Structure probing data (2A3 and DMS) for a 177-nucleotide construct. The reactions ran in a buffer of 150 mM KOAc, 10 mM MgCl2 and 150 mM bicine (pH 8.5), at 24 C. 2A3 adducts were read by reverse transcription with SuperScript II with manganese. It was measured as part of the RMDB library 15KREP.

[RMDB]
RNA sequence: GGGAACGACUCGAGUAGAGUCGAAAAGCGAAUGGGACCCAGAACUCUCUUUAGCUUCCGAAAGAGAAGCAAGAGAAAACUGGCUCUCCCUUAGCCAUCCGAGUGGACGUCUGUCCUCCUUCGGAUGCUGUACUUCGUACUUCGGUACGAAGUACAGAAAAGAAACAACAACAACAAC
Reactivity to 2A3 in 0.01 (KOAc 150mM, MgCl2 10mM, bicine 150mM(pH8.5), 24C), signal-to-noise 1, nucleotides 027 to 126: g000c000g020a040a020u050g010g010g000a020c050c000c000a000g020a050a050c070u010c000u020c010u010u060u150a040g020c000u000u040c020c000g230a260a150a050g140a030g020a000a000g010c000a000a010g000a000g000a010a010a000a040c000u000g000g010c000u040c030u020c010c000c000u000u000a000g010c000c000a000u000c000c000g000a010g000u020g000g010a000c020g110u140c280u300g030u010c040c030u020c020c100u070u060c010g010g010a000u000g000
Reactivity to DMS in 0.01 (KOAc 150mM, MgCl2 10mM, bicine 150mM(pH8.5), 24C), signal-to-noise 2, nucleotides 027 to 126: g030c000g000a100a100u000g010g000g020a020c170c000c000a020g010a140a300c190u000c010u000c000u000u000u020a130g040c000u000u000c010c000g010a070a110a260g010a080g000a060a020g020c000a050a000g020a020g000a000a040a090a220c000u000g000g000c010u000c080u000c000c010c000u000u000a090g000c000c000a020u000c000c000g010a000g000u000g000g020a000c000g050u010c250u000g000u000c000c010u000c050c100u000u000c000g020g000a020u000g000